[RMDB]
The record gives the reactivity of an RNA of 177 nucleotides to DMS and 2A3. Reactivities are rounded to 0.1 and cut off at 0 and 3. Source: RMDB library TTRDES, as collected in RNAgym. For DMS the reverse transcriptase was MarathonRT. The 2A3 profile rests on 14,674 reads. Conditions: 150 mM KOAc, 10 mM MgCl2 and 150 mM bicine (pH 8.5), 24 C.
RNA sequence: GGGAACGACUCGAGUAGAGUCGAAAAGAUAUGGACCUCGAAGGGAGCUACAUAUCGGAAACGAUAUGUUAGCAUCGAUCUUCAGGUCCUAAGUCAAAACGCGGAGUCGGUUCGCCGACUCCGCGAACUAUCACAAUUAGUUCGCUAAUUGUGAUAGAAAAGAAACAACAACAACAAC
Reactivity to DMS in 0.01 (KOAc 150mM, MgCl2 10mM, bicine 150mM(pH8.5), 24C), signal-to-noise 3, nucleotides 027 to 126: g010a010u000a020u020g000g000a010c000c000u000c300g020a020a000g020g010g000a010g040c000u000a020c000a020u000a000u010c000g000g010a010a000a020c000g000a010u000a000u000g000u020u010a010g030c010a300u010c210g000a010u000c000u010u000c000a020g010g000u010c000c000u000a000a050g000u000c000a110a070a100a160c020g010c000g010g010a020g020u000c020g000g010u010u020c300g010c020c000g010a010c000u010c000c010g000c000g010a010a080
Reactivity to 2A3 in 0.01 (KOAc 150mM, MgCl2 10mM, bicine 150mM(pH8.5), 24C), signal-to-noise 4, nucleotides 027 to 126: g000a000u010a010u040g000g000a010c020c020u100c300g000a000a010g030g000g010a020g000c000u000a000c000a010u010a010u010c000g000g030a000a000a000c010g020a010u010a000u020g150u270u220a010g000c000a030u300c000g000a000u000c000u000u000c000a000g020g000u000c000c000u000a000a000g000u000c010a000a100a030a070c030g020c030g060g050a000g020u020c050g000g080u120u130c300g070c110c010g000a000c010u000c000c010g030c000g010a000a010